Annotation
Structure probing data (DMS and 2A3) for a 177-nucleotide construct. For 2A3, 1,237 sequencing reads were counted.

[RMDB]
RNA sequence: GGGAACGACUCGAGUAGAGUCGAAAAGCCGGCACCUGGCUGUUGUGGGACGGCAAGCGCAGCCCGAUUGAUCUGGCCGAUCAUGCGGUCACCAGCGGCCUCGGCCUGGGCGCCGACGUGCCCGCGCGGUUCAAGGUAGUUUCGACUACCUUGAACCAAAAGAAACAACAACAACAAC
Reactivity to DMS in 0.01 (KOAc 150mM, MgCl2 10mM, bicine 150mM(pH8.5), 24C), signal-to-noise 1, nucleotides 027 to 126: g010c000c070g030g090c030a090c030c080u000g020g030c020u000g000u020u000g030u000g050g000g000a110c030g030g020c020a060a130g020c110g000c080a070g000c040c010c070g010a110u010u000g000a040u010c040u000g000g010c080c030g010a100u000c070a100u000g030c030g000g020u010c000a070c050c030a030g000c070g000g010c020c030u000c040g010g000c020c040u030g010g020g030c080g040c020c020g010a060c160g010u000g000c030c000c060g020c050g010c180
Reactivity to 2A3 in 0.01 (KOAc 150mM, MgCl2 10mM, bicine 150mM(pH8.5), 24C), signal-to-noise 1, nucleotides 027 to 126: g000c000c050g000g050c020a060c000c030u020g010g000c050u070g020u100u000g080u170g000g020g010a020c020g090g000c040a040a020g090c040g010c090a010g040c060c000c010g090a080u080u220g120a110u020c030u040g040g000c020c030g000a050u040c030a010u120g010c000g070g020u030c040a040c090c020a010g020c010g040g000c020c030u040c020g050g020c000c060u130g110g160g000c120g000c010c000g000a050c050g050u070g000c010c000c020g000c030g000c050